[RMDB]
RNA sequence: GGGAACGACUCGAGUAGAGUCGAAAAAUGGGGCUGUAGCAAUCUUAUUUAGGAUGAAAGUCUGAUUGGCCCUUAUUAGGAUGAUUAACCUUUCUGAAAUUAAGAGCCACCCCUGAAUUAGUCUGUCCUUAGUGACUAUGUUCGCAUAGUCACUAAGAAAAGAAACAACAACAACAAC
Reactivity to DMS in 0.01 (KOAc 150mM, MgCl2 10mM, bicine 150mM(pH8.5), 24C), signal-to-noise 4, nucleotides 027 to 126: a090u010g000g000g010g010c300u000g020u020a110g020c060a080a100u000c020u000u000a030u010u000u010a090g010g010a090u000g000a050a030a040g000u000c060u010g000a040u000u000g010g010c080c000c030u020u000a040u010u000a090g010g000a070u000g000a030u000u000a050a090c130c010u000u000u010c000u010g010a120a060a030u010u000a010a030g010a080g010c030c020a060c010c000c000c020u000g000a090a120u000u000a070g010u010c050u000g000u010c080
Reactivity to 2A3 in 0.01 (KOAc 150mM, MgCl2 10mM, bicine 150mM(pH8.5), 24C), signal-to-noise 2, nucleotides 027 to 126: a010u040g010g000g020g000c090u010g010u100a040g090c050a130a120u020c000u040u090a060u110u100u110a060g020g030a030u050g010a070a020a000g000u000c070u050g010a050u040u030g080g020c010c030c000u020u000a070u020u130a020g020g000a000u070g000a000u030u070a030a060c010c000u010u030u000c010u040g040a070a090a070u040u020a020a010g000a010g050c000c000a010c000c000c010c030u020g010a040a020u030u030a080g060u010c060u040g060u020c020